RNA sequence: GGGAACGACUCGAGUAGAGUCGAAAAUUCGCAUUGGUCUUUGGCGACGCUAAUGUUGAUGUACGUGACGGGAUCGAUCACCACACUGAUGGCCAUGUUUCAAACUUACACCGGCAGCACAAACUACGUGCCGUUCUACACCAAGAUUUUUGACGUGAAAUAGACAUAGGUUCGCCUAUGUCUAUUUAAAAGAAACAACAACAACAAC
Reactivity to 2A3 in 0.01 (KOAc 150mM, MgCl2 10mM, bicine 150mM(pH8.5), 24C), signal-to-noise 5, nucleotides 027 to 156: u080u020c030g000c030a000u000u040g040g020u010c030u070u070u080g050g000c010g020a030c030g000c080u090a060a060u120g050u100u120g030a070u030g010u060a040c060g020u040g050a030c030g030g020g050a050u090c040g020a040u050c020a020c090c000a040c020a020c040u090g020a110u070g060g000c020c010a050u060g070u020u030u020c080a120a090a050c020u070u020a040c030a020c050c000g040g000c010a030g030c050a030c030a080a170a030c060u180a060c080g050u040g000c000c020g020u020u040c040u040a020c020a020c050c050a040a070g020a080u050u140u100u090u130g100a090c060g040u050g070
Reactivity to DMS in 0.01 (KOAc 150mM, MgCl2 10mM, bicine 150mM(pH8.5), 24C), signal-to-noise 3, nucleotides 027 to 156: u010u010c060g030c050a160u000u000g010g040u000c030u000u010u010g030g010c010g020a050c050g050c020u010a050a060u010g000u000u000g020a050u000g020u010a030c080g020u010g010a130c040g030g000g000a100u010c050g000a110u010c030a070c030c020a050c120a100c060u000g000a090u010g010g010c000c040a080u000g030u020u000u000c060a060a070a120c040u010u000a110c030a070c060c020g000g010c020a030g030c040a090c070a020a070a090c090u000a060c060g020u010g000c020c010g000u000u000c010u000a100c040a070c040c030a050a100g010a160u000u000u000u000u000g010a140c060g010u010g000